[RMDB]
RNA sequence: GGGAACGACUCGAGUAGAGUCGAAAAGAUAUGGACUGUUGAUUCAACAGCCAUAGGUCGGAAACGACCUGAUGGACAUGAAUUUACAGUCCUAAGUCAAAGAAUCGGAUCUUCGGAUCCGAUUCAAGCAUCACUCUUGGUUCGCCAAGAGUGAUGCAAAAGAAACAACAACAACAAC
Reactivity to 2A3 in 0.01 (KOAc 150mM, MgCl2 10mM, bicine 150mM(pH8.5), 24C), signal-to-noise 2, nucleotides 027 to 126: g020a000u000a020u050g000g000a010c020u000g030u050u030g020a000u000u040c130a300a150c070a300g040c000c000a000u010a020g010g030u010c000g000g000a000a010a000c000g000a010c000c010u040g130a030u010g020g060a060c210a300u300g010a010a010u000u000u000a000c000a000g000u030c000c000u000a000a000g020u030c020a110a020a200g010a000a000u000c020g000g000a010u000c030u090u140c300g130g010a000u000c020c030g000a000u000u000c010a000a000

This 177-nucleotide RNA was probed chemically with 2A3.
The reactions ran in a buffer of 150 mM KOAc, 10 mM MgCl2 and 150 mM bicine (pH 8.5), at 24 C.
Source: RMDB library TTRDES, as collected in RNAgym.